[RMDB]
RNA sequence: GGGAACGACUCGAGUAGAGUCGAAAACUUGAACACAAAUCUUCAUAGUGGUAUUGUUCACUAUAGCCAGUAAGUAGAAACAAUCCAAAUGUCCAGCUGAUGAUGAAUAAAUACAGUGUGGUGGAUCCUCUCCAAUUAGGUUCGCCUAAUUGGAGAGAAAAGAAACAACAACAACAAC
Reactivity to 2A3 in 0.01 (KOAc 150mM, MgCl2 10mM, bicine 150mM(pH8.5), 24C), signal-to-noise 4, nucleotides 027 to 126: c000u040u130g160a180a000c040a010c030a120a110a170u070c030u130u040c060a060u050a150g090u040g070g050u120a060u100u100g030u060u030c030a030c020u040a030u090a140g080c010c030a020g050u140a200a000g010u020a090g060a090a040a020c020a020a030u000c030c020a050a120a150u150g040u000c030c010a000g000c030u040g020a060u040g010a040u010g050a130a110u120a110a070a020u120a070c010a010g020u070g010u030g170g020u020g010g000a010u010c010
Reactivity to DMS in 0.01 (KOAc 150mM, MgCl2 10mM, bicine 150mM(pH8.5), 24C), signal-to-noise 3, nucleotides 027 to 126: c020u000u000g010a070a080c070a050c100a050a110a110u000c050u000u010c060a020u000a080g030u000g000g010u010a060u000u000g010u000u000c050a050c050u010a070u000a120g010c080c050a040g010u000a070a060g020u000a030g000a190a050a050c070a040a060u000c030c050a040a110a070u010g010u000c040c040a080g010c030u000g010a070u010g010a070u000g000a080a080u020a030a050a060u000a040c080a060g000u000g010u000g010g010u000g030g010a110u000c100